[RMDB]
RNA sequence: GGGAACGACUCGAGUAGAGUCGAAAAGUCUAGCGAAAGGAUCCCACCCGGGAGACACGCAAGUCGCGAAUUACGCCGACCGGCCAAGGUCAAUUGCAGAACUCAACUGCAUGAGUAAGCUAGACGAAGUAUCACUCAUCUUCGGAUGAGUGAUACUAAAAGAAACAACAACAACAAC
Reactivity to 2A3 in 0.01 (KOAc 150mM, MgCl2 10mM, bicine 150mM(pH8.5), 24C), signal-to-noise 2, nucleotides 027 to 126: g000u020c000u000a000g030c000g070a130a050a040g110g010a030u030c020c000c010a010c030c000c000g000g000g040a030g000a010c040a020c050g020c050a090a050g220u180c050g020c000g060a100a210u300u080a110c110g050c020c000g030a020c000c020g000g000c000c030a040a010g000g000u040c010a000a050u060u020g020c000a000g050a170a110c060u060c200a050a150c020u000g000c020a010u010g000a020g090u050a040a060g000c010u010a010g010a000c000g000a010
Reactivity to DMS in 0.01 (KOAc 150mM, MgCl2 10mM, bicine 150mM(pH8.5), 24C), signal-to-noise 3, nucleotides 027 to 126: g000u000c000u000a000g000c000g020a110a150a140g030g020a030u000c000c000c010a110c300c000c030g000g010g010a120g000a040c010a120c020g000c030a140a100g010u020c210g000c000g050a130a060u040u020a040c130g040c000c000g000a050c000c050g010g010c010c040a130a200g000g000u010c010a030a140u000u000g000c000a030g000a080a110c120u000c170a100a060c010u000g010c030a040u020g000a140g010u000a080a140g000c000u000a010g000a020c000g000a060